Conditions: 150 mM KOAc, 10 mM MgCl2 and 150 mM bicine (pH 8.5), 24 C.
This 177-nucleotide RNA was probed chemically with 2A3 and DMS.
For 2A3, 1,277 sequencing reads were counted.
The DMS profile rests on 7,514 reads.
It was measured as part of the RMDB library OK2TRN.
RNA sequence: GGGAACGACUCGAGUAGAGUCGAAAAUUCUCUUUAUGGGAAGGAGAUUGUAAUUUUACUAAAGAUAUGAUUUCUCAGUUGGUUCCAGAAUGUGAUGGAUUUUAUAACAAUUCUAAGUGGAUGCAUACCUACCUAUUAGUUUCGACUAAUAGGUAGGAAAAGAAACAACAACAACAAC
Reactivity to 2A3 in 0.01 (KOAc 150mM, MgCl2 10mM, bicine 150mM(pH8.5), 24C), signal-to-noise 2, nucleotides 027 to 126: u000u010c010u000c000u010u140u020a160u170g000g000g040a020a030g040g010a030g000a010u000u060g020u030a140a210u020u110u160u150a140c080u120a170a110a050g050a120u090a110u160g030a030u030u090u040c050u030c030a090g000u070u090g110g030u100u030c000c010a010g060a160a140u060g010u060g070a040u060g020g050a040u040u080u000u110a260u030a140a030c090a020a060u090u000c010u060a060a040g100u070g080g030a010u070g020c010a030u050a090
Reactivity to DMS in 0.01 (KOAc 150mM, MgCl2 10mM, bicine 150mM(pH8.5), 24C), signal-to-noise 6, nucleotides 027 to 126: u000u000c010u000c000u010u000u000a120u020g020g000g010a070a070g000g010a090g010a040u000u000g000u020a040a090u010u000u000u000a140c120u010a070a060a100g010a090u000a030u000g000a080u000u000u000c010u000c050a070g010u000u010g010g010u000u010c020c020a080g010a080a070u000g010u010g000a110u010g000g010a050u000u000u010u010a080u020a120a090c100a040a050u000u000c020u010a070a120g020u010g010g010a080u000g010c070a080u000a180